[RMDB]
RNA sequence: GGGAACGACUCGAGUAGAGUCGAAAAGAUCAUAUCUAAGCAAUUCGAUCUUAGUGACGAUGAAAGAGAACGUGUUGGUGGAUUUAACUCCAUUAUUGAAUGGUUUGUCAACUUCUCACGCGUUAAAGCUAUUGCCUUGGUUCGCCAAGGCAAUAGCAAAAGAAACAACAACAACAAC
Reactivity to 2A3 in 0.01 (KOAc 150mM, MgCl2 10mM, bicine 150mM(pH8.5), 24C), signal-to-noise 2, nucleotides 027 to 126: g050a010u010c010a010u030a020u130c020u060a070a010g080c000a010a130u090u110c170g040a110u040c040u040u010a090g040u040g080a010c030g030a040u000g150a040a030a130g120a010g040a050a000c020g000u010g060u160u110g080g020u080g030g040a040u090u060u040a060a000c000u010c030c030a030u040u060a150u110u250g250a020a030u010g040g040u110u070u060g100u080c000a000a010c000u030u080c030u030c000a010c030g030c020g000u030u090a140a020a000
Reactivity to DMS in 0.01 (KOAc 150mM, MgCl2 10mM, bicine 150mM(pH8.5), 24C), signal-to-noise 2, nucleotides 027 to 126: g000a030u000c000a040u000a070u000c030u000a090a050g070c280a220a110u020u000c170g000a090u000c010u000u010a090g010u020g000a070c170g000a070u000g000a030a130a150g000a080g010a020a020c020g000u000g010u000u000g030g010u030g000g000a090u010u000u000a030a010c060u000c010c000a020u000u000a250u010u000g020a070a000u000g000g010u030u030u000g020u010c080a020a010c180u000u000c010u010c020a020c030g000c010g000u000u000a040a150a110